[RMDB]
RNA sequence: GGGAACGACUCGAGUAGAGUCGAAAAGAAAGAAAGAAAGAAAUCUGACAGAAUGACGGAUUCGAGCGUUGUGGUCGGCGGGCCACCACGUCAUUCCUUCGCACUGUCUCCGGGCAGACCGCCAUAAAAAAGCGGAUCUACUUCGGUAGAUCCGCAAGUAAGAUUCGAUGUUCGCAUCGAAUCUUACAAAAGAAACAACAACAACAAC
Reactivity to 2A3 in 0.01 (KOAc 150mM, MgCl2 10mM, bicine 150mM(pH8.5), 24C), signal-to-noise 3, nucleotides 027 to 156: g040a000a060a000g060a040a070a010g060a040a100a010g050a020a130a000u050c030u090g040a060c030a050g210a260a180u170g030a080c040g020g020a040u060u080c070g010a010g020c010g000u010u000g000u010g030g000u020c040g000g040c000g000g000g010c000c000a000c010c010a010c010g020u030c030a030u070u070c010c000u070u090c040g010c050a040c030u000g000u010c020u000c040c090g050g000g000c010a030g020a130c000c020g000c020c010a080u280a030a120a010a000a020a020g000c000g000g010a010u000c010u000a000c000u020u050c090g040g000u000a000g000a000u010c000c000g000c000a000a000